The record gives the reactivity of an RNA of 177 nucleotides to 2A3 and DMS. The RNA was probed in 150 mM KOAc, 10 mM MgCl2 and 150 mM bicine (pH 8.5) at 24 C. For 2A3 the reverse transcriptase was SuperScript II with manganese. DMS adducts were read by reverse transcription with MarathonRT. DMS (dimethyl sulfate) methylates the pairing face of unpaired adenines and cytosines.

RNA sequence: GGGAACGACUCGAGUAGAGUCGAAAAUCGGUACUAUACAGGGAAGGGAAGUCACUCGCAUACGUGUGUGUGCAUUUCUUGCUAUUGCUGCUUAGCUUCUCUAAAACACUGGGCUACGUUUUUCAACCGUGUGUAAAAUAUUCGUAUUUUACACACGAAAAGAAACAACAACAACAAC
Reactivity to 2A3 in 0.01 (KOAc 150mM, MgCl2 10mM, bicine 150mM(pH8.5), 24C), signal-to-noise 9, nucleotides 027 to 126: u090c020g020g010u030a050c030u030a030u060a150c210a060g020g000g040a030a010g030g010g020a020a010g040u030c010a010c020u050c010g000c020a020u040a120c250g070u030g010u020g000u000g000u000g040c040a020u030u020u020c020u030u040g010c010u040a070u170u280g070c100u020g000c010u050u030a020g000c000u020u000c000u000c000u040a040a060a040a010c080a020c030u050g020g050g000c030u080a050c080g040u020u030u010u030u080c040a060a050c040
Reactivity to DMS in 0.01 (KOAc 150mM, MgCl2 10mM, bicine 150mM(pH8.5), 24C), signal-to-noise 9, nucleotides 027 to 126: u010c050g010g010u000a060c100u010a100u010a090c100a050g000g000g010a060a050g010g000g000a040a030g010u000c020a020c040u000c050g020c030a030u000a080c180g040u010g020u000g010u000g020u000g000c110a040u010u000u000c020u000u000g010c030u000a060u010u020g030c220u000g000c020u000u000a040g000c020u000u000c010u000c020u000a050a070a090a100c150a060c050u000g000g010g000c060u010a060c100g000u000u000u000u000u000c070a080a180c220